[RMDB]
RNA sequence: GGGAACGACUCGAGUAGAGUCGAAAAGAUAUGGACACUUCGCGUACGUUUGUGGGAGCCUAUCUUUGGGCUCGGAAACGAGCCGAUAGGCAUCGAUCACACGGACGUACGCGAAGUGUCCUAAGUCCUAGACAAGUACGUUCGCGUACUUGUCUAGAAAAGAAACAACAACAACAAC
Reactivity to DMS in 0.01 (KOAc 150mM, MgCl2 10mM, bicine 150mM(pH8.5), 24C), signal-to-noise 2, nucleotides 027 to 126: g000a160u010a300u000g000g000a000c000a000c000u010u000c010g010c000g010u010a030c000g000u000u000u000g010u000g000g000g010a100g000c020c000u000a010u010c030u030u020u010g050g020g000c000u000c000g010g000a070a120a230c010g010a010g010c010c000g020a000u010a000g010g030c060a070u000c190g000a300u010c080a160c010a010c020g000g000a000c010g030u000a000c020g010c000g000a000a010g010u000g000u000c000c070u000a010a070g020u010c020